An RNA of 177 nucleotides, treated with 2A3 and DMS and read out base by base. Conditions: 150 mM KOAc, 10 mM MgCl2 and 150 mM bicine (pH 8.5), 24 C. 2A3 adducts were read by reverse transcription with SuperScript II with manganese. It was measured as part of the RMDB libraries RFM100 and RFMREP.
RNA sequence: GGGAACGACUCGAGUAGAGUCGAAAAUUAUCUGAUCUGAAAGACAGUAUUGAUGAAAUCAUUUCUUCACUGGAAGAUGCAGCACAGUAGAAAGAAGGUGGUUAUGUGAAGAAAAUAGUUGCAGCAUCAAUAAUCUAACUUUCGAGUUAGAUUAUUGAAAAGAAACAACAACAACAAC
Reactivity to 2A3 in 0.01 (KOAc 150mM, MgCl2 10mM, bicine 150mM(pH8.5), 24C), signal-to-noise 9, nucleotides 027 to 126: u110u060a030u030c020u020g050a050u010c010u070g140a130a070a040g070a030c010a000g070u110a080u130u170g110a110u070g060a040a050a060u100c060a070u020u020u010c000u010u010c010a030c020u020g010g030a070a050g070a140u130g030c020a010g030c000a020c020a050g120u180a070g110a060a090a020g070a030a030g070g030u040g010g060u070u080a070u130g060u030g030a030a060g000a030a050a010a040u130a030g020u030u030g020c040a040g020c010a040u000
Reactivity to DMS in 0.01 (KOAc 150mM, MgCl2 10mM, bicine 150mM(pH8.5), 24C), signal-to-noise 7, nucleotides 027 to 126: u010u020a050u010c010u000g010a110u010c020u000g000a140a110a130g010a100c040a010g010u010a070u010u010g010a060u010g000a080a090a150u020c070a060u000u000u000c010u000u000c040a040c040u000g010g010a090a090g010a070u010g000c050a060g010c050a080c040a070g020u010a090g020a090a040a060g010a050a080g010g030u010g000g010u010u010a040u010g020u000g000a050a050g000a050a040a040a050u020a070g010u000u000g010c080a070g000c130a060u000